[RMDB]
RNA sequence: GGGAACGACUCGAGUAGAGUCGAAAACACGUUUAGCUUUUACAUAUAGUACUCGUGAUGUAAAUUAUCAAUAUGUUCUUCAUAUUAGAUACGAAGUCUAUCGUAUAUUAUUUGGUAAUCCUGAUGGAUCUUCACAGCGUUUCGACGCUGUGAAGAUAAAAGAAACAACAACAACAAC
Reactivity to 2A3 in 0.01 (KOAc 150mM, MgCl2 10mM, bicine 150mM(pH8.5), 24C), signal-to-noise 1, nucleotides 027 to 126: c060a030c030g030u030u000u090a030g100c050u030u090u070u180a050c030a090u230a020u020a070g020u030a050c010u030c080g010u040g060a020u080g080u090a000a110a190u200u080a010u080c010a000a000u050a000u070g040u000u130c060u170u090c060a020u030a010u000u080a050g000a030u030a060c000g030a060a020g020u010c040u120a110u080c030g050u080a030u000a030u070u030a030u050u000u050g060g040u010a030a030u050c000c000u040g020a080u170g120g080
Reactivity to DMS in 0.01 (KOAc 150mM, MgCl2 10mM, bicine 150mM(pH8.5), 24C), signal-to-noise 1, nucleotides 027 to 126: c040a100c130g000u000u000u000a100g000c040u000u000u000u000a090c020a080u000a020u000a020g000u000a000c060u000c020g030u010g010a050u000g020u000a070a120a150u020u000a020u000c010a020a020u010a010u000g000u010u010c270u010u010c050a010u000a020u000u000a100g020a010u000a000c110g010a080a270g010u010c070u020a060u000c030g010u040a060u000a040u000u010a070u000u000u000g020g000u000a080a020u000c100c010u000g000a140u010g000g010